[RMDB]
RNA sequence: GGGAACGACUCGAGUAGAGUCGAAAAGAUAUGGAUCCCAGUAGGGAGCUUCCACCUCGGAAACGAGGUGGGAGCGAGGAUCUAUAGGGAUCCUAAGUCAAAAGCUUGAUUCUUCGGAAUCAAGCAAUCAAUAUUAUUCGUUCGCGAAUAAUAUUGAAAAAGAAACAACAACAACAAC
Reactivity to 2A3 in 0.01 (KOAc 150mM, MgCl2 10mM, bicine 150mM(pH8.5), 24C), signal-to-noise 2, nucleotides 027 to 126: g000a020u040a010u060g000g000a000u010c000c010c040a000g020u060a010g010g030g050a150g010c000u010u000c010c000a000c010c000u010c000g000g000a040a010a020c000g000a010g000g000u010g020g000g000a000g000c000g000a000g000g010a010u010c010u000a040u120a100g000g000g000a010u000c000c000u010a040a010g010u020c010a120a040a110a090g010c010u020u010g010a000u020u000c010u030u070c300g190g010a000a010u010c000a010a000g000c000a000a000
Reactivity to DMS in 0.01 (KOAc 150mM, MgCl2 10mM, bicine 150mM(pH8.5), 24C), signal-to-noise 5, nucleotides 027 to 126: g000a030u000a200u010g000g010a010u000c000c000c010a300g030u000a010g000g000g000a060g020c000u000u000c000c000a010c010c000u000c000g010g000a070a050a110c010g020a020g000g040u010g000g000g010a000g020c000g000a050g010g010a040u000c000u000a030u000a180g000g000g010a010u000c000c000u000a000a070g000u010c020a110a120a140a150g000c000u000u000g000a010u000u000c000u000u020c260g030g000a010a010u000c000a000a010g010c000a040a020
Structure probing data (2A3 and DMS) for a 177-nucleotide construct. For DMS the reverse transcriptase was MarathonRT. Source: RMDB library TTRDES, as collected in RNAgym. For 2A3 the reverse transcriptase was SuperScript II with manganese. Conditions: 150 mM KOAc, 10 mM MgCl2 and 150 mM bicine (pH 8.5), 24 C. The 2A3 profile rests on 10,331 reads. Values cover nucleotides 27 to 126.